[RMDB]
RNA sequence: GGGAACGACUCGAGUAGAGUCGAAAAGCACUCUCGCCAGAGGAGCCGCUGGGAGCCGUCAUGGUGAUCAACCUAUCCCGGCAACGAUGCUCGCCGUUCGGUGGGCCUCGGUCGCUCGCGGGUUGAGGUUGCGAAGUAGUUUCGACUACUUCGCAACAAAAGAAACAACAACAACAAC
Reactivity to 2A3 in 0.01 (KOAc 150mM, MgCl2 10mM, bicine 150mM(pH8.5), 24C), signal-to-noise 2, nucleotides 027 to 126: g030c000a010c080u080c010u040c050g050c010c020a050g030a110g150g010a010g030c020c050g000c070u060g060g000g000a010g000c050c000g250u200c080a140u190g010g060u050g060a200u130c040a020a030c000c000u030a050u000c010c000c000g000g070c020a020a020c000g000a000u000g000c000u020c010g000c010c020g140u300u300c230g000g000u000g010g000g020c000c010u010c000g000g040u090c090g020c010u010c050g100c050g020g010g010u020u170g020a050g060
Reactivity to DMS in 0.01 (KOAc 150mM, MgCl2 10mM, bicine 150mM(pH8.5), 24C), signal-to-noise 2, nucleotides 027 to 126: g000c100a110c060u010c030u000c030g030c050c090a080g000a130g000g000a050g010c040c190g000c030u000g000g010g010a040g010c040c090g010u000c190a110u000g000g000u000g000a160u000c100a040a020c020c010u000a130u000c030c010c000g010g020c000a120a110c010g020a010u000g000c020u000c010g030c000c000g040u000u030c130g020g020u010g010g010g000c000c020u000c010g010g000u000c190g000c030u000c130g010c070g030g010g010u000u000g020a040g020

Chemical mapping of a 177-nucleotide RNA with 2A3 and DMS. DMS adducts were read by reverse transcription with MarathonRT. The RNA was probed in 150 mM KOAc, 10 mM MgCl2 and 150 mM bicine (pH 8.5) at 24 C.